[RMDB]
RNA sequence: GGGAACGACUCGAGUAGAGUCGAAAAUUCGGAUGAUGGUUGACCUGACUGAUGAUGAGUUCGCUCGGCUUAAGCCAACUGUGGAAGGAGGCUGUCAUGCCCAUCGGAGCAAAAUUGCAGCAUACUCCUGACACCGUUGGUUCGCCAACGGUGUCAGAAAAGAAACAACAACAACAAC
Reactivity to DMS in 0.01 (KOAc 150mM, MgCl2 10mM, bicine 150mM(pH8.5), 24C), signal-to-noise 1, nucleotides 027 to 126: u000u000c020g010g000a110u000g010a110u000g000g000u010u020g000a060c040c070u000g000a110c010u030g020a000u000g000a070u010g020a050g000u020u000c180g000c030u000c090g010g020c080u000u000a100a080g010c000c040a040a070c080u000g000u010g020g000a050a020g000g000a300g000g040c000u010g030u000c300a050u000g000c040c030c030a030u020c180g000g020a070g000c010a050a040a110a090u020u000g000c000a020g000c010a160u010a300c090u000c020
This 177-nucleotide RNA was probed chemically with DMS. The DMS profile rests on 635 reads. DMS (dimethyl sulfate) methylates the pairing face of unpaired adenines and cytosines. Reactivities are given for positions 27 through 126.